[RMDB]
RNA sequence: GGGAACGACUCGAGUAGAGUCGAAAACGCGAGUAAGACAGACUCUUCAGUCUGAGUUUGUGGAGAUGAGUGUAAAUCUGGCAUAGCAUACAGGUUAAAAACUAACGGGAACUUCGGUUCCCGUUAGCCUAUCUUCGUAGUUCGCUACGAAGAUAGGAAAAGAAACAACAACAACAAC
Reactivity to DMS in 0.01 (KOAc 150mM, MgCl2 10mM, bicine 150mM(pH8.5), 24C), signal-to-noise 7, nucleotides 027 to 126: c070g020c060g010a130g000u010a050a300g010a090c030a030g000a030c020u000c080u000u010c150a110g010u000c100u000g010a070g010u000u010u000g010u000g010g000a160g010a030u000g010a150g010u000g000u010a070a050a050u000c020u000g010g000c040a080u000a070g010c080a090u010a110c070a030g010g010u010u000a060a050a050a080a280c000u000a000a010c010g000g000g000a010a010c000u010u020c190g020g010u000u000c000c000c000g000u000u000a000g000
Reactivity to 2A3 in 0.01 (KOAc 150mM, MgCl2 10mM, bicine 150mM(pH8.5), 24C), signal-to-noise 4, nucleotides 027 to 126: c020g030c030g020a010g040u060a060a000g070a030c010a000g010a010c010u040c010u170u130c150a210g160u080c100u070g010a010g030u040u040u040g030u030g010g040a150g010a060u080g020a030g050u040g020u060a050a060a040u010c010u010g040g010c060a140u080a080g040c020a020u080a170c020a030g030g050u080u110a030a050a030a040a050c000u000a000a000c000g000g020g000a000a000c000u040u060c200g040g000u010u000c000c000c000g000u000u000a000g000
This 177-nucleotide RNA was probed chemically with DMS and 2A3. The 2A3 profile rests on 5,316 reads. The DMS profile rests on 7,469 reads. The RNA was probed in 150 mM KOAc, 10 mM MgCl2 and 150 mM bicine (pH 8.5) at 24 C.